[RMDB]
RNA sequence: GGGAACGACUCGAGUAGAGUCGAAAAGAUAUGGACGUACUGCGACAUGCUGAUAAUCGGAAACGAUUAAUAGCAACAGCGCAGGUACGUCCUAAGUCAAAGUCCACAUUCUUCGGAAUGUGGACAACUCUGCAAAGGUGUUCGCACCUUUGCAGAGAAAAGAAACAACAACAACAAC
Reactivity to 2A3 in 0.01 (KOAc 150mM, MgCl2 10mM, bicine 150mM(pH8.5), 24C), signal-to-noise 1, nucleotides 027 to 126: g000a010u050a010u060g000g000a000c000g000u030a030c000u020g010c010g070a160c240a300u110g000c000u070g020a130u030a070a000u000c000g000g010a000a000a000c010g010a010u040u020a020a060u180a050g010c040a050a220c180a300g110c000g040c010a080g040g070u000a000c000g000u000c000c000u000a010a000g000u000c030a190a040a080g000u000c000c010a000c010a050u000u010c000u050u110c140g110g000a020a030u010g000u000g010g000a000c000a000a000
Reactivity to DMS in 0.01 (KOAc 150mM, MgCl2 10mM, bicine 150mM(pH8.5), 24C), signal-to-noise 1, nucleotides 027 to 126: g010a030u010a170u010g020g000a010c000g000u010a000c000u000g030c020g000a180c140a180u030g000c010u030g000a110u000a010a010u000c020g020g000a070a050a110c000g010a010u000u000a000a120u010a000g010c010a090a090c260a160g010c000g020c000a000g000g000u000a000c000g000u000c000c000u000a020a100g000u000c040a070a120a100g020u000c000c010a010c000a000u000u010c020u000u010c240g020g000a000a000u000g020u000g000g010a000c010a020a060